[RMDB]
An RNA of 177 nucleotides, treated with 2A3 and DMS and read out base by base. The RNA was probed in 150 mM KOAc, 10 mM MgCl2 and 150 mM bicine (pH 8.5) at 24 C. For 2A3, 14,947 sequencing reads were counted.
RNA sequence: GGGAACGACUCGAGUAGAGUCGAAAAAGUUUGGCACGUUCUGCACGACUGAUAUCGAUAUCACGAGCACGUUCUGCAGAGUCAGCGACGAUUGUGAUCAUAUCAUUGGCAAUUUCAAUAACGCCACGAAUAUAGAGGAGUUCGCUCCUCUAUAUUCAAAAGAAACAACAACAACAAC
Reactivity to 2A3 in 0.01 (KOAc 150mM, MgCl2 10mM, bicine 150mM(pH8.5), 24C), signal-to-noise 9, nucleotides 027 to 126: a000g100u110u070u090g020g000c040a040c190g050u150u100c070u060g000c040a050c180g070a020c060u040g000a030u030a020u100c100g020a030u040a030u190c020a010c020g010a010g040c130a020c200g010u010u030c000u010g000c020a090g060a080g300u270c020a010g020c020g060a010c010g020a040u030u060g020u020g030a010u020c020a010u030a010u070c030a040u030u060g010g010c010a050a110u030u190u160c090a150a120u140a180a050c080g010c010c010a050c110
Reactivity to DMS in 0.01 (KOAc 150mM, MgCl2 10mM, bicine 150mM(pH8.5), 24C), signal-to-noise 9, nucleotides 027 to 126: a090g010u000u000u000g010g010c010a120c210g010u010u010c090u000g010c030a070c100g000a050c110u000g010a050u000a070u000c130g020a080u000a070u010c030a050c010g000a040g020c160a100c040g010u000u000c030u000g010c020a220g000a140g020u020c040a040g010c160g000a030c030g000a100u000u000g010u000g000a040u000c050a050u000a110u000c040a080u000u000g010g010c020a070a110u010u000u010c160a070a100u010a080a120c200g010c020c010a070c300